[RMDB]
Description:
The data come from the RNA Mapping Database (RMDB), library OK3TST. Chemical mapping of a 207-nucleotide RNA with 2A3. The 2A3 profile rests on 1,199 reads.
RNA sequence: GGGAACGACUCGAGUAGAGUCGAAAAGUACCAAACGGUGUGAACGCGUAACCGAACAGUGCUCGUCCGUCCACGCAGAUGAAAUCUUCACCGCGUAGUCUGGAAAAGCGGCGGAAUGCGUCAUGCUCCAACCGCAGCUUCUCACUGAUCCGAGGUAUCCAUGUCGGAAGUUCGCUUCCGACAUGGAAAAAGAAACAACAACAACAAC
Reactivity to 2A3 in 0.01 (KOAc 150mM, MgCl2 10mM, bicine 150mM(pH8.5), 24C), signal-to-noise 2, nucleotides 027 to 156: g040u040a010c000c050a030a090a020c060g000g040u040g010u010g100a130a000c030g000c030g050u060a080a090c000c030g000a020a000c090a150g030u050g160c000u040c050g020u000c020c000g010u030c030c000a010c030g010c010a010g030a170u020g050a070a160a140u140c140u120u030c050a000c090c020g000c010g000u010a020g020u010c090u140g010g000a020a010a020a020g010c020g030g000c010g020g000a070a050u060g000c000g010u060c030a070u100g020c020u020c060c050a040a050c070c040g030c020a050g000c020u030u010c010u000c000a050c030u050g050a020u020c030c030g020a020g030g010u030a070